[RMDB]
An RNA of 177 nucleotides, treated with DMS and read out base by base.
The reactions ran in a buffer of 150 mM KOAc, 10 mM MgCl2 and 150 mM bicine (pH 8.5), at 24 C.
The DMS profile rests on 1,955 reads.
The data come from the RNA Mapping Database (RMDB), library TTRINS.
For DMS the reverse transcriptase was MarathonRT.

RNA sequence: GGGAACGACUCGAGUAGAGUCGAAAAGAUAUGGAAAUCCCGCUCGCACAUGAGGGCUAGCUAUACUCGGAAACGAGUAUAGCUAGCCUACCCACCAUGUGAACUACGAGCGUGGAUUUCCUAAGUCCUAUAUUCCCGUGUUCGCACGGGAAUAUAGAAAAGAAACAACAACAACAAC
Reactivity to DMS in 0.01 (KOAc 150mM, MgCl2 10mM, bicine 150mM(pH8.5), 24C), signal-to-noise 3, nucleotides 027 to 126: g020a100u000a220u010g000g010a010a020a000u000c000c010c020g000c000u000c000g040c000a020c020a000u000g000a160g010g000g010c000u000a020g000c000u000a000u000a010c000u000c000g030g000a100a130a300c000g020a010g020u000a000u000a000g000c000u000a010g020c020c000u000a000c050c060c140a300c110c010a010u020g010u000g000a060a070c200u040a300c050g010a010g000c010g030u030g020g010a000u000u000u000c000c010u010a040a080g000u000c050